RNA sequence: GGGAACGACUCGAGUAGAGUCGAAAAAAAGUGUACGAAAGAACAAAGAAGCAAUCAAACCGAGUAGUGAAAUGAUGGCUUCAGUCCAAAAUGGGCAAACACUACAGACGGAGCCAAACGCAAUUAAGUAUGGAGGACAAUUCGUUGUCCUCCAUACAAAAGAAACAACAACAACAAC
Reactivity to 2A3 in 0.01 (KOAc 150mM, MgCl2 10mM, bicine 150mM(pH8.5), 24C), signal-to-noise 1, nucleotides 027 to 126: a000a030a060g060u090g020u070a050c080g090a040a050a180g040a040a000c010a020a110a100g000a020a010g000c020a000a040u030c060a090a000a070c000c030g050a030g120u190a000g030u050g060a010a040a160u140g060a020u020g010g070c010u060u020c030a000g030u000c000c000a190a170a030a200u140g000g000g050c050a000a090a000c050a020c010u060a000c040a080g110a000c000g060g000a000g080c060c010a000a140a000c130g000c050a070a000u140u070a160a090
Reactivity to DMS in 0.01 (KOAc 150mM, MgCl2 10mM, bicine 150mM(pH8.5), 24C), signal-to-noise 2, nucleotides 027 to 126: a030a030a120g030u000g030u000a060c110g080a020a110a130g000a090a030c110a030a130a110g010a030a040g000c020a060a010u000c040a040a010a170c090c040g020a100g030u010a080g040u030g010a080a090a150u000g010a040u000g030g000c000u000u010c020a070g010u010c070c060a010a030a030a040u000g000g000g000c100a030a020a070c010a010c000u000a060c160a040g020a100c020g010g030a060g000c020c090a000a040a060c210g000c110a050a070u000u050a100a100
The record gives the reactivity of an RNA of 177 nucleotides to 2A3 and DMS. Values cover nucleotides 27 to 126.